RNA sequence: GGGAACGACUCGAGUAGAGUCGAAAAUGACGCAAGCCCUCCAGCAAGGUGCAGACCGGAGUCUGUGCCUCGUUCCCUGGGGCGAUAGCUACUGCUGGAGGGUUUUGCAUUAUCCGUAUCUGGAUAACGAUGCACUCUAAUUCGUUAGAGUGCAUCGAAAAGAAACAACAACAACAAC
Reactivity to 2A3 in 0.01 (KOAc 150mM, MgCl2 10mM, bicine 150mM(pH8.5), 24C), signal-to-noise 4, nucleotides 027 to 126: u110g070a010c080g000c000a000a000g000c000c000c000u010c000c010a000g000c020a060a020g020g010u030g000c000a000g000a020c050c140g230g020a240g010u000c000u000g020u010g010c000c010u010c010g010u020u010c010c000c030u050g010g000g020g070c010g010a040u110a020g030c040u080a070c030u080g000c000u000g000g000a010g000g000g000u050u010u000u000g000c000a000u010u010a000u000c000c000g060u080a130u200c100u170g020g000a020u020a020a020
Reactivity to DMS in 0.01 (KOAc 150mM, MgCl2 10mM, bicine 150mM(pH8.5), 24C), signal-to-noise 3, nucleotides 027 to 126: u030g010a180c180g010c000a010a030g000c000c020c010u000c010c000a010g000c030a100a030g010g020u010g010c000a000g000a010c000c300g020g020a170g010u010c000u000g010u000g000c010c000u000c000g020u000u000c010c010c010u010g020g000g000g010c100g000a080u040a070g000c060u010a060c200u010g020c010u010g000g000a020g000g000g010u000u000u000u000g000c010a130u010u000a010u000c000c000g010u030a100u020c130u040g020g000a040u020a010a090
Record summary
This 177-nucleotide RNA was probed chemically with 2A3 and DMS.